An RNA of 177 nucleotides, treated with 2A3 and DMS and read out base by base.
RNA sequence: GGGAACGACUCGAGUAGAGUCGAAAAGAAAGAAAGCGGAUGGUCUAGAGUCCAGGAAAAGGCAGGGUUCAACCAUGUAUAAGGCCGUCGGAUCACGGGGAUCCCGGGUCAGCCGCGUUCUCUGGAAACUUGCGGUAAUUUUCGAAUUACCGCAAGUAAAAGAAACAACAACAACAAC
Reactivity to 2A3 in 0.01 (KOAc 150mM, MgCl2 10mM, bicine 150mM(pH8.5), 24C), signal-to-noise 5, nucleotides 027 to 126: g090a010a130a020g060a020a100a010g040c000g040g010a020u030g010g030u020c050u090a120g010a020g060u000c010c000a020g140g100a030a140a060a020g130g050c120a060g040g000g000u030u070c040a040a030c010c030a010u060g070u060a160u050a160a060g040g010c010c000g070u090c070g020g000a010u040c040a040c200g020g010g150g010a020u050c030c000c000g000g040g000u010c010a010g040c010c000g020c000g010u050u000c040u000c000u000g030g060a100a240
Reactivity to DMS in 0.01 (KOAc 150mM, MgCl2 10mM, bicine 150mM(pH8.5), 24C), signal-to-noise 4, nucleotides 027 to 126: g020a070a090a080g000a040a060a080g010c030g000g000a030u000g030g010u020c040u000a090g000a110g000u010c020c000a220g000g000a090a030a140a120g000g020c050a100g010g010g000u000u020c140a090a090c060c030a040u020g010u010a090u030a130a170g030g000c020c020g020u020c110g020g000a120u010c030a120c110g010g000g040g000a060u000c040c000c050g000g000g010u000c040a040g010c020c010g010c030g000u010u000c020u000c000u010g000g010a140a090
The 2A3 profile rests on 3,180 reads. For DMS the reverse transcriptase was MarathonRT. For DMS, 6,464 sequencing reads were counted.